[RMDB]
RNA sequence: GGGAACGACUCGAGUAGAGUCGAAAAGAUUUUAUUGUUUGAACCUUAUGGUGCUGAUUCUGCUGUUACAUGGUUCAUGUUUGAGUGGAAUGGGUCAUAUACCGUGUGGUGAUUCUCGAACGGCUCAGGACGAACAAUCCUUCGGGGUUGUUCGUCCAAAAGAAACAACAACAACAAC
Reactivity to DMS in 0.01 (KOAc 150mM, MgCl2 10mM, bicine 150mM(pH8.5), 24C), signal-to-noise 2, nucleotides 027 to 126: g000a090u010u020u040u030a040u010u010g000u010u000u000g010a100a030c000c000u000u010a020u010g010g000u000g010c020u010g000a050u000u000c010u000g010c000u000g000u010u000a030c000a010u010g000g020u000u040c030a040u000g000u020u000u000g000a040g040u000g000g020a030a020u000g000g000g010u040c070a060u040a040u030a040c020c010g000u040g020u010g010g000u010g000a130u010u000c020u000c060g020a130a020c080g010g040c000u000c140a260
Reactivity to 2A3 in 0.01 (KOAc 150mM, MgCl2 10mM, bicine 150mM(pH8.5), 24C), signal-to-noise 1, nucleotides 027 to 126: g070a000u080u110u100u170a080u060u090g210u080u130u000g040a030a010c000c000u040u000a020u070g020g020u030g020c020u010g040a000u010u000c020u000g170c010u030g100u170u170a010c000a050u010g090g050u070u110c010a000u000g000u000u040u000g030a000g000u000g000g040a040a000u000g060g000g010u010c040a000u110a000u020a120c030c010g000u030g020u040g020g000u000g040a120u170u000c020u000c020g010a090a010c010g000g000c000u000c070a010
Structure probing data (DMS and 2A3) for a 177-nucleotide construct. The data come from the RNA Mapping Database (RMDB), library OK1LIB. Reactivities are given for positions 27 through 126. Conditions: 150 mM KOAc, 10 mM MgCl2 and 150 mM bicine (pH 8.5), 24 C.